Background:
Structure probing data (2A3 and DMS) for a 177-nucleotide construct. Reactivities are given for positions 27 through 126. For 2A3 the reverse transcriptase was SuperScript II with manganese. For 2A3, 7,349 sequencing reads were counted. The reactions ran in a buffer of 150 mM KOAc, 10 mM MgCl2 and 150 mM bicine (pH 8.5), at 24 C. High DMS reactivity at an A or C suggests that its Watson-Crick edge is free.

RNA sequence: GGGAACGACUCGAGUAGAGUCGAAAAGAUAUGGAAUGGGAGGACGAUAAGCUCUGGUCGGAAACGACCAUCUGAGCUUUUGACGUCCCACUCCAUUCCUAAGUCAAAAUCGAUCCUUCGGGAUCGACAGAAUUAGUCACUUCGGUGACUAAUUCUGAAAAGAAACAACAACAACAAC
Reactivity to 2A3 in 0.01 (KOAc 150mM, MgCl2 10mM, bicine 150mM(pH8.5), 24C), signal-to-noise 3, nucleotides 027 to 126: g000a000u080a050u130g000g010a000a000u010g000g010g030a110g020g010a030c030g040a100u030a240a000g000c000u010c030u030g000g000u020c000g000g030a040a070a080c010g010a000c000c010a030u040c100u050g010a010g000c000u050u010u020u090g090a070c030g000u000c000c000c010a170c030u030c000c010a000u000u000c010c010u010a100a020g050u040c030a060a000a020a300u040c010g010a000u010c000c000u030u110c300g110g010g010a000u010c000g000a000
Reactivity to DMS in 0.01 (KOAc 150mM, MgCl2 10mM, bicine 150mM(pH8.5), 24C), signal-to-noise 4, nucleotides 027 to 126: g000a040u000a300u000g010g000a010a000u000g010g030g000a240g000g010a030c030g020a140u010a030a010g020c010u000c010u010g000g000u000c000g000g000a080a080a230c000g010a010c000c020a050u000c230u000g010a030g020c000u000u000u000u000g010a250c100g000u000c000c010c030a080c130u010c000c000a020u010u000c020c010u000a030a100g000u010c050a100a040a100a150u000c010g000a010u000c000c000u010u010c230g040g000g000a000u000c000g010a020